Structure probing data (2A3 and DMS) for a 177-nucleotide construct.
2A3 adducts were read by reverse transcription with SuperScript II with manganese.
High 2A3 reactivity points to a flexible backbone, as in loops and unpaired stretches.
For 2A3, 10,818 sequencing reads were counted.
The reactions ran in a buffer of 150 mM KOAc, 10 mM MgCl2 and 150 mM bicine (pH 8.5), at 24 C.
[RMDB]
RNA sequence: GGGAACGACUCGAGUAGAGUCGAAAAGAACCAGUGUUCGCACUGGUUCAAACCUGACAAGGGAGUCAGGAAAGUCUGCGAAAAGCACACUUAAACUCCCUAAAACCGUGAGCUUCGGCUCACGGAACCUAUUCAUCUACUUCGGUAGAUGAAUAGGAAAAGAAACAACAACAACAAC
Reactivity to 2A3 in 0.01 (KOAc 150mM, MgCl2 10mM, bicine 150mM(pH8.5), 24C), signal-to-noise 4, nucleotides 027 to 126: g000a000a000c000c000a000g000u010g030u040u070c170g030c100a000c000u000g000g000u000u000c000a000a000a000c000c000u010g020a030c060a070a020g020g020g000a010g020u040c040a020g050g000a060a010a000g020u000c030u020g010c010g040a260a140a100a000g010c000a010c000a000c020u010u010a040a040a010c000u020c010c000c000u020a060a060a010a060c000c000g000u000g000a000g000c020u050u130c300g070g000c000u010c000a000c000g000g000a000a000
Reactivity to DMS in 0.01 (KOAc 150mM, MgCl2 10mM, bicine 150mM(pH8.5), 24C), signal-to-noise 4, nucleotides 027 to 126: g000a030a000c000c000a000g010u000g010u000u020c210g030c000a010c000u000g020g000u010u000c010a030a090a210c000c000u000g000a070c230a100a040g000g000g000a020g010u000c030a020g030g000a080a020a010g000u010c170u000g010c000g000a090a080a070a130g000c000a000c110a010c010u010u000a100a090a050c010u000c000c000c000u000a050a050a120a170c000c010g010u000g010a010g000c000u010u020c190g010g000c000u000c000a000c000g000g010a020a040